RNA sequence: GGGAACGACUCGAGUAGAGUCGAAAAAUCCUCAGGUUCAUAAGCGUGAUGAUUGGGUGUUCAUGCUCCAUGCAUGACAUGCGCCUCCUUUGAACCUUGUUACGACCUUGGCACAUUACCCAUCUGAAAAAGACGUUCGCGUUCGCGCGAACGUCAAUCACAAGAGUUUGUUCGCAAACUCUUGUGAAAAAGAAACAACAACAACAAC
Reactivity to 2A3 in 0.01 (KOAc 150mM, MgCl2 10mM, bicine 150mM(pH8.5), 24C), signal-to-noise 3, nucleotides 027 to 156: a000u020c010c000u000c010a010g020g020u000u000c020a020u060a280a040g010c070g100u060g060a090u040g020a040u160u190g090g060g000u040g020u120u040c000a010u010g000c000u070c260c070a110u260g000c010a000u020g010a010c000a020u030g060c000g020c000c000u010c000c020u000u030u030g000a010a010c000c000u000u090g040u020u090a080c070g030a060c010c000u020u060g010g000c030a020c010a090u020u090a050c020c010c000a010u000c090u090g090a060a090a030a080a080g000a010c000g000u000u000c000g020c030g000u010u030c180g000c000g000c010g080a000a000c000g000u000c000a000a000
Reactivity to DMS in 0.01 (KOAc 150mM, MgCl2 10mM, bicine 150mM(pH8.5), 24C), signal-to-noise 1, nucleotides 027 to 156: a110u000c010c000u000c090a000g010g020u000u000c010a080u000a050a070g010c040g080u000g010a150u000g010a190u010u000g020g010g010u010g020u000u000c010a000u000g020c000u000c210c250a140u010g060c020a040u020g020a010c160a040u010g010c000g000c040c010u000c080c020u000u010u000g000a020a000c000c010u000u010g030u000u000a090c090g000a050c020c000u000u000g050g040c020a030c080a120u000u000a130c070c020c020a070u020c040u010g010a100a060a110a160a140g000a030c000g040u010u000c040g030c000g020u000u000c230g050c020g060c000g010a030a000c000g020u000c000a000a050
Chemical mapping of a 207-nucleotide RNA with 2A3 and DMS. Values cover nucleotides 27 to 156. The RNA was probed in 150 mM KOAc, 10 mM MgCl2 and 150 mM bicine (pH 8.5) at 24 C. It was measured as part of the RMDB library M2RFOK.